[RMDB]
RNA sequence: GGGAACGACUCGAGUAGAGUCGAAAAGUGUCGAAGAUCGAAGCUACCAUUUCCCGGAGUCCGGUAGCGAGAUCGAGAUACCAGAGGACGACGGGUAUCGGAUGACGUGUAAGCUUUACCCGUCCCGCUUACACGUUAUCCCUGAGGGACGGGAUGACCACUAAUCGAUCUUCGGAUCGAUUAGUGGAAAAGAAACAACAACAACAAC
Reactivity to 2A3 in 0.01 (KOAc 150mM, MgCl2 10mM, bicine 150mM(pH8.5), 24C), signal-to-noise 2, nucleotides 027 to 156: g070u040g060u080c030g090a100a030g010a050u050c030g060a130a000g000c000u000a000c010c020a060u060u040u120c040c000c030g070g050a150g070u070c110c060g000g000u000a000g010c000g000a000g000a010u020c000g000a020g000a010u010a010c010c000a020g020a070g150g040a020c090g020a010c030g020g000g030u060a050u060c020g090g010a120u110g010a040c020g000u000g010u010a010a000g010c020u160u050u130a110c000c010c000g000u000c010c000c000g000c000u000u000a000c000a000c000g020u010u010a060u080c010c000c030u110g040a120g000g000g020a000c000g010g030g000a000u050g030a000

Description: Conditions: 150 mM KOAc, 10 mM MgCl2 and 150 mM bicine (pH 8.5), 24 C. An RNA of 207 nucleotides, treated with 2A3 and read out base by base. It was measured as part of the RMDB library OK3TST. The 2A3 profile rests on 1,652 reads. 2A3 adducts were read by reverse transcription with SuperScript II with manganese.